RNA sequence: GGGAACGACUCGAGUAGAGUCGAAAAGAGGGUGGUUUCAGGUAUGAAAUCGACAGGUACUAAAUCAGUGAACAGAGGGGCAAACAACGCUAUCACGGUAAAAAAAAGCGGCAGUUACCAGUAACGAUCAUCUGAUAAGGUUCGCCUUAUCAGAUGAAAAAGAAACAACAACAACAAC
Reactivity to DMS in 0.01 (KOAc 150mM, MgCl2 10mM, bicine 150mM(pH8.5), 24C), signal-to-noise 3, nucleotides 027 to 126: g020a120g030g020g020u000g000g010u000u000u000c030a060g000g000u010a070u020g000a030a070a070u000c060g030a050c080a080g010g020u000a080c070u000a030a070a060u010c070a060g010u000g010a040a060c110a090g010a080g030g000g020g010c090a070a020a050c060a080a050c070g000c040u000a090u000c080a060c020g010g010u000a000a000a000a070a050a040a080a060g010c050g020g000c060a020g000u000u000a050c040c030a090g010u000a040a060c120g000a130
Reactivity to 2A3 in 0.01 (KOAc 150mM, MgCl2 10mM, bicine 150mM(pH8.5), 24C), signal-to-noise 2, nucleotides 027 to 126: g080a020g000g000g040u020g030g000u020u040u040c060a050g030g070u160a140u150g060a060a080a020u070c010g020a020c030a030g000g080u020a010c000u070a010a070a090u140c040a010g030u020g100a030a010c030a030g050a020g030g030g020g000c000a040a080a030c030a090a000c040g000c000u030a020u070c010a030c030g050g020u110a140a010a020a000a030a000a050a040g010c010g030g050c000a010g000u020u050a040c030c030a040g020u040a060a030c040g010a050
An RNA of 177 nucleotides, treated with DMS and 2A3 and read out base by base.
For 2A3, 2,026 sequencing reads were counted.
Source: RMDB library RFMREP, as collected in RNAgym.